Chemical mapping of a 177-nucleotide RNA with 2A3 and DMS. DMS adducts were read by reverse transcription with MarathonRT.
RNA sequence: GGGAACGACUCGAGUAGAGUCGAAAACCCACCGAGGGCCUGGCGCACAUCCUCAACAUCGCGCUGGGCAGUAAGCCCAAGGUGUCGUAUUUCCUGGCCCUGUUCGCUGGGACGGCAGCACCUGCUGCUAGAUUGGUGAUUUCGAUCACCAAUCUAGAAAAGAAACAACAACAACAAC
Reactivity to 2A3 in 0.01 (KOAc 150mM, MgCl2 10mM, bicine 150mM(pH8.5), 24C), signal-to-noise 9, nucleotides 027 to 126: c010c000c000a010c020c050g080a110g010g110g010c010c010u020g010g010c010g030c010a040c010a170u170c020c080u160c050a040a080c050a130u180c050g000c010g010c030u010g000g000g000c000a000g000u020a010a020g030c020c030c060a040a020g000g010u020g030u040c030g000u050a260u120u080u020c000c010u010g020g000c040c020c070u160g130u220u210c060g000c020u020g000g000g010a020c020g030g000c010a010g010c010a040c020c030u080g020c030u050g010
Reactivity to DMS in 0.01 (KOAc 150mM, MgCl2 10mM, bicine 150mM(pH8.5), 24C), signal-to-noise 9, nucleotides 027 to 126: c010c000c000a120c150c080g000a180g000g010g010c010c010u000g000g010c040g020c030a130c180a080u000c090c080u010c150a090a100c200a090u010c120g010c020g010c030u000g010g000g000c020a030g000u000a080a130g010c080c040c020a100a100g000g010u000g010u010c040g020u000a130u010u000u010c010c010u000g000g010c010c060c080u000g010u010u010c180g010c020u000g010g000g010a050c240g010g000c030a040g010c020a080c060c070u000g010c100u000g010

Conditions: 150 mM KOAc, 10 mM MgCl2 and 150 mM bicine (pH 8.5), 24 C.